RNA sequence: GGGAACGACUCGAGUAGAGUCGAAAAGUCAGUGCACUUAUGGGUGCUAAUGGCAACAAGAUUGUUGACAAAGAAGUUAAAGACAUGCAGUUUGAUUUGUAUGUCAAUGUUUACAGGAGCACUAGCCCAUGUCAUUUCAGUUCGCUGAAAUGACAUGAAAAGAAACAACAACAACAAC
Reactivity to DMS in 0.01 (KOAc 150mM, MgCl2 10mM, bicine 150mM(pH8.5), 24C), signal-to-noise 4, nucleotides 027 to 126: g020u000c060a110g020u000g010c070a080c040u000u000a100u000g030g000g000u000g000c020u000a080a080u000g010g010c020a020a040c040a070a110g000a170u010u000g010u000u000g010a030c060a060a100a120g020a100a110g000u000u000a050a100a160g000a010c010a010u000g000c010a010g020u000u020u010g010a110u000u000u010g010u000a020u010g000u000c000a050a050u000g000u000u000u000a070c080a040g010g000a090g000c030a050c010u000a090g010c010c040
Reactivity to 2A3 in 0.01 (KOAc 150mM, MgCl2 10mM, bicine 150mM(pH8.5), 24C), signal-to-noise 3, nucleotides 027 to 126: g000u020c040a020g040u010g040c040a010c040u070u060a100u290g220g000g000u050g010c000u040a100a030u030g030g000c020a010a010c000a010a040g100a210u150u150g090u020u020g030a040c030a030a100a050g090a080a010g050u080u160a140a060a000g020a000c000a000u040g000c000a010g040u140u190u140g210a250u020u130u020g010u000a010u000g010u000c030a000a020u030g000u010u030u030a040c040a040g000g040a020g000c010a010c030u030a030g010c000c010